Description
Source: RMDB library OK2TST, as collected in RNAgym. An RNA of 177 nucleotides, treated with DMS and 2A3 and read out base by base. For DMS the reverse transcriptase was MarathonRT. For 2A3 the reverse transcriptase was SuperScript II with manganese.
RNA sequence: GGGAACGACUCGAGUAGAGUCGAAAACCUCCCCCUCUUCCUCCAGGAACGAGGUGAAGACCUCGGGUGGGGGUUCGCCGAGGGCCGCGAUGAGCGAGAGGUGGGCCCUGUCUUGAGGGGUGAGGAGCUAUACCCCCAUGUUCGCAUGGGGGUAUAGAAAAGAAACAACAACAACAAC
Reactivity to DMS in 0.01 (KOAc 150mM, MgCl2 10mM, bicine 150mM(pH8.5), 24C), signal-to-noise 4, nucleotides 027 to 126: c030c020u010c010c000c010c000c000u000c010u000u010c000c000u010c090c130a120g000g010a090a130c010g000a030g010g020u000g000a160a130g000a040c000c000u000c000g010g010g050u000g000g010g010g000g010u000u000c010g020c020c010g000a170g020g020g020c100c000g020c050g000a150u020g000a260g010c010g010a100g000a240g010g010u010g000g020g000c010c000c000u000g000u000c030u010u010g000a050g020g010g010g010u010g010a020g010g010a060g000
Reactivity to 2A3 in 0.01 (KOAc 150mM, MgCl2 10mM, bicine 150mM(pH8.5), 24C), signal-to-noise 2, nucleotides 027 to 126: c010c010u020c000c010c010c010c010u000c030u070u050c010c010u050c020c020a020g050g030a070a020c000g000a000g010g020u030g010a010a040g170a070c000c020u020c020g030g000g050u160g100g030g020g000g030u020u010c020g000c000c000g070a120g080g160g030c060c000g010c020g100a240u280g020a010g050c030g030a050g000a010g030g020u020g010g020g000c020c000c010u090g000u030c020u030u060g030a020g000g010g010g030u100g010a010g000g000a010g020
The reactions ran in a buffer of 150 mM KOAc, 10 mM MgCl2 and 150 mM bicine (pH 8.5), at 24 C.